Chemical mapping of a 207-nucleotide RNA with 2A3.
The reactions ran in a buffer of 150 mM KOAc, 10 mM MgCl2 and 150 mM bicine (pH 8.5), at 24 C.
It was measured as part of the RMDB library RNAMAK.
2A3 adducts were read by reverse transcription with SuperScript II with manganese.
RNA sequence: GGGAACGACUCGAGUAGAGUCGAAAACGCUGGGUUUAUUGGAUGCUUUUGACGCUUGUACUGAAGCGCGCACGGUACAAGAGCGAUAAGCAUCAGGAACCUGUGCUGAAGCGCGCACGGCAACCGAAAGGUGCGAAAAGGGCACGUUCGCGUGCCCCACGGCUAUACGCUUCGGCGUAUAGCCGUGAAAAGAAACAACAACAACAAC
Reactivity to 2A3 in 0.01 (KOAc 150mM, MgCl2 10mM, bicine 150mM(pH8.5), 24C), signal-to-noise 1, nucleotides 027 to 156: c040g000c000u020g000g000g060u090u040u150a280u300u240g190g040a010u030g000c000u040u060u080u260g160a100c050g010c050u050u020g000u000a000c010u000g040a200a020g000c020g010c010g000c010a040c040g000g010u000a000c010a050a000g020a010g090c090g030a040u040a140a010g010c000a000u010c000a050g070g010a010a010c020c010u040g100u060g000c020u060g050a080a020g030c010g020c030g000c000a010c020g150g000c030a090a070c030c000g000a090a060a030g030g000u020g000c000g000a100a100a040a040g020g010g000c000a000c000g000u050u050c190g000c000g050u000g000c000c000c000